Conditions: 150 mM KOAc, 10 mM MgCl2 and 150 mM bicine (pH 8.5), 24 C. An RNA of 177 nucleotides, treated with 2A3 and read out base by base.
[RMDB]
RNA sequence: GGGAACGACUCGAGUAGAGUCGAAAAUCCUUAUUUACCAAUAGUAUAGGAGCAUCAUUUGAUGUAGCAAGUGGUGUUGAUGUUAUACCAUCAACUAUAGAGUACCCAUUUACUAAUACUACUGUAUGACCUAGCUACGCUUCGGCGUAGCUAGGUCAAAAGAAACAACAACAACAAC
Reactivity to 2A3 in 0.01 (KOAc 150mM, MgCl2 10mM, bicine 150mM(pH8.5), 24C), signal-to-noise 1, nucleotides 027 to 126: u000c000c000u000u000a120u000u050u000a300c230c040a030a160u040a040g000u020a000u000a120g150g250a230g140c000a000u000c000a000u000u090u300g270a290u040g000u030a100g050c010a300a000g000u130g070g000u080g120u000u000g000a000u000g000u110u250a230u000a230c190c000a000u000c000a000a000c000u000a100u080a120g110a000g300u000a000c030c040c040a080u150u000u000a000c000u060a040a040u000a000c000u000a100c000u040g040u100a000u060